Structure probing data (2A3 and DMS) for a 207-nucleotide construct.
The RNA was probed in 150 mM KOAc, 10 mM MgCl2 and 150 mM bicine (pH 8.5) at 24 C.
For 2A3, 8,447 sequencing reads were counted.
[RMDB]
RNA sequence: GGGAACGACUCGAGUAGAGUCGAAAAGCUUGGGAUUCGUCCCAAGCGACAUGGGGUCGUUUAAGCAUCGAUCUGUGAACUACUCCUGAAGCCUCCACGGGAGCACAGGGAGUGAAGACGACGGAGGCACCCGGUUUUCCAUAGUUCGCUAUGGAAACACAGAAUAUGGUUUCGACCAUAUUCUGUGAAAAGAAACAACAACAACAAC
Reactivity to 2A3 in 0.01 (KOAc 150mM, MgCl2 10mM, bicine 150mM(pH8.5), 24C), signal-to-noise 6, nucleotides 027 to 156: g000c000u010u000g010g030g010a040u080u090c180g070u040c060c000c000a000a000g000c000g000a010c010a090u270g060g020g080g010u020c030g010u130u210u160a260a040g030c040a040u300c110g030a030u030c010u000g000u010g030a140a150c100u180a060c030u210c000c000u010g010a060a020g000c000c000u000c000c000a020c010g010g000g000a030g010c000a000c000a010g050g030g030a220g010u010g000a020a010g030a000c010g000a000c000g000g000a010g000g000c000a030c000c010c000g030g020u040u020u020u000c000c000a000u000a000g020u040u080c230g030c100u000a000u010g000g000a010a010a000
Reactivity to DMS in 0.01 (KOAc 150mM, MgCl2 10mM, bicine 150mM(pH8.5), 24C), signal-to-noise 3, nucleotides 027 to 156: g000c020u010u020g010g000g020a040u010u000c200g010u000c000c010c000a030a030g000c000g010a040c070a090u010g030g040g000g020u010c030g000u000u000u000a120a300g020c040a170u000c120g010a100u000c020u000g000u000g000a190a170c110u010a300c020u000c000c000u000g040a080a190g000c000c010u000c020c000a300c040g010g010g000a050g010c000a030c050a170g000g000g000a090g000u000g000a160a160g000a050c020g030a110c120g000g020a050g050g040c020a160c010c010c010g000g010u000u000u000u000c000c000a010u000a010g020u010u000c300g000c040u000a010u000g000g000a010a010a110